[RMDB]
RNA sequence: GGGAACGACUCGAGUAGAGUCGAAAAGAUAUGGAGCUAUUCUCGCUUGGAUUUAUGGUGCAUGGAUUUAUAUCGGAAACGAUAUAAAUUCUGUGAUGCCAUUGUCAGCGAGAUAGCUCCUAAGUCAGUAAGCACUAAUGUUCGCAUUAGUGCUUACAAAAGAAACAACAACAACAAC
Reactivity to 2A3 in 0.01 (KOAc 150mM, MgCl2 10mM, bicine 150mM(pH8.5), 24C), signal-to-noise 2, nucleotides 027 to 126: g020a020u150a110u250g000g020a010g000c000u020a010u300u300c020u050c000g030c060u130u300g230g000a120u190u300u230a000u090g000g020u000g000c000a020u030g000g000a000u000u000u000a000u010a010u000c020g030g040a060a050a100c010g000a000u010a000u000a000a000a000u200u020c000u000g010u010g090a300u090g000c000c000a010u000u000g000u000c000a010g000c000g010a010g000a000u010a010g000c000u000c000c000u000a000a000g010u000c010a000
Reactivity to DMS in 0.01 (KOAc 150mM, MgCl2 10mM, bicine 150mM(pH8.5), 24C), signal-to-noise 2, nucleotides 027 to 126: g000a060u010a300u010g010g010a020g010c000u000a010u010u010c000u000c020g020c010u000u000g020g020a020u010u020u000a000u000g010g010u000g020c010a030u000g010g000a020u000u000u000a020u000a000u000c000g020g010a120a120a260c000g010a000u010a000u000a020a000a010u010u010c000u020g010u010g000a180u000g020c000c000a020u000u000g010u000c000a050g000c010g020a010g000a000u000a010g000c000u000c010c000u000a010a050g010u010c080a190